[RMDB]
RNA sequence: GGGAACGACUCGAGUAGAGUCGAAAACGGCCAUCCGGCUCGCGGGACACGAUCACCAUCGUCGGAUUCAGCGUUGCGAGGGUUUCGUCGUCCCAGGACCACACGAACUCAAGCGGCGCGGUGUGCUCAAGUACGUACUUUUCGAAGUACGUACUUGAAAAGAAACAACAACAACAAC
Reactivity to 2A3 in 0.01 (KOAc 150mM, MgCl2 10mM, bicine 150mM(pH8.5), 24C), signal-to-noise 9, nucleotides 027 to 126: c020g050g000c020c020a030u050c020c020g020g000c030u030c040g060c140g020g010g010a020c040a020c110g060a120u060c050a040c080c010a060u070c020g060u010c020g030g040a030u170u170c060a030g020c010g040u070u050g000c010g010a040g000g030g000u030u120u130c020g010u010c030g010u000c010c010c000a050g040g050a010c020c010a030c010a000c070g030a050a010c010u020c040a040a020g000c000g020g000c010g000c020g020g020u090g010u040g000c010u000
Reactivity to DMS in 0.01 (KOAc 150mM, MgCl2 10mM, bicine 150mM(pH8.5), 24C), signal-to-noise 5, nucleotides 027 to 126: c080g000g010c020c080a090u030c070c080g010g010c010u000c100g000c220g010g030g000a070c100a090c100g000a070u000c060a060c040c050a080u010c090g010u000c060g000g000a100u000u030c110a300g010c020g020u010u010g020c010g000a300g000g000g000u000u010u000c030g020u000c140g010u000c010c010c080a070g000g010a050c040c040a090c210a200c010g010a070a030c020u000c020a060a280g000c010g020g000c020g010c020g010g030u000g000u000g000c060u020